[RMDB]
RNA sequence: GGGAACGACUCGAGUAGAGUCGAAAAAGUACCAUAGUACGGUACGCGCGUGUGGCGCGUCGUACGUACGUCGGCCAGGUACAUAGCGCUGCGCGAUCGUACGUGACGAUCCACGUACUAGUACCGGGCUACAUCCCCAGUUCGCUGGGGAUGUAGCAAAAGAAACAACAACAACAAC
Reactivity to DMS in 0.01 (KOAc 150mM, MgCl2 10mM, bicine 150mM(pH8.5), 24C), signal-to-noise 2, nucleotides 027 to 126: a110g000u020a100c020c060a170u010a170g010u000a030c010g020g000u010a010c000g000c040g000c010g040u000g050u020g010g010c130g000c010g000u000c050g000u010a040c020g020u000a050c040g010u010c170g010g000c020c000a090g010g020u020a040c120a100u000a080g000c070g000c050u010g030c090g030c100g000a040u000c050g000u000a090c120g000u030g000a040c060g010a060u010c040c010a000c010g010u000a030c010u000a100g000u000a020c010c030g000g000
Reactivity to 2A3 in 0.01 (KOAc 150mM, MgCl2 10mM, bicine 150mM(pH8.5), 24C), signal-to-noise 2, nucleotides 027 to 126: a000g060u040a030c020c020a050u080a030g140u100a030c020g040g050u020a010c010g000c010g000c000g000u190g060u150g200g040c050g030c020g020u030c050g000u010a020c000g010u000a020c030g030u020c040g070g080c050c020a020g000g060u100a100c070a120u250a040g140c220g050c060u080g000c040g000c040g070a080u150c060g030u000a030c020g020u050g080a050c040g010a020u050c040c000a040c030g020u010a010c040u030a020g000u000a010c000c000g030g000